[RMDB]
RNA sequence: GGGAACGACUCGAGUAGAGUCGAAAACGCGUCAGAUUCGUCUGACGCGAAAGCAUAGAACAGCGCUAUCAUGUAUUUUAGUUCUAUGCAACUAUAGCGCUAAAACGAUACCGUUCGCGGUAUCGAAGUGACAAGGAUAGUUCGCUAUCCUUGUCACAAAAGAAACAACAACAACAAC
Reactivity to DMS in 0.01 (KOAc 150mM, MgCl2 10mM, bicine 150mM(pH8.5), 24C), signal-to-noise 3, nucleotides 027 to 126: c020g030c000g010u000c000a000g000a030u000u010c190g040u000c000u010g010a010c000g070c000g000a010a040a080g010c030a010u000a010g000a010a020c050a100g040c040g030c020u000a060u020c200a130u010g000u010a070u010u010u010u000a080g020u000u000c000u000a020u000g010c020a030a020c160u000a050u000a010g010c020g010c010u010a040a040a060a140c020g010a020u000a000c000c010g000u000u010c190g010c000g010g000u000a020u000c000g010a020a060
Reactivity to 2A3 in 0.01 (KOAc 150mM, MgCl2 10mM, bicine 150mM(pH8.5), 24C), signal-to-noise 5, nucleotides 027 to 126: c000g010c000g000u000c000a000g000a040u020u080c110g060u000c090u000g000a000c000g010c000g010a000a000a010g010c000a020u030a040g040a030a030c030a060g000c010g010c040u030a040u170c060a100u170g220u280a300u090u210u040u150a040g010u010u000c020u030a040u050g000c010a010a000c010u060a010u060a100g020c010g030c060u080a040a020a000a120c010g000a010u000a000c020c010g000u020u030c260g000c000g080g000u010a000u010c000g000a040a010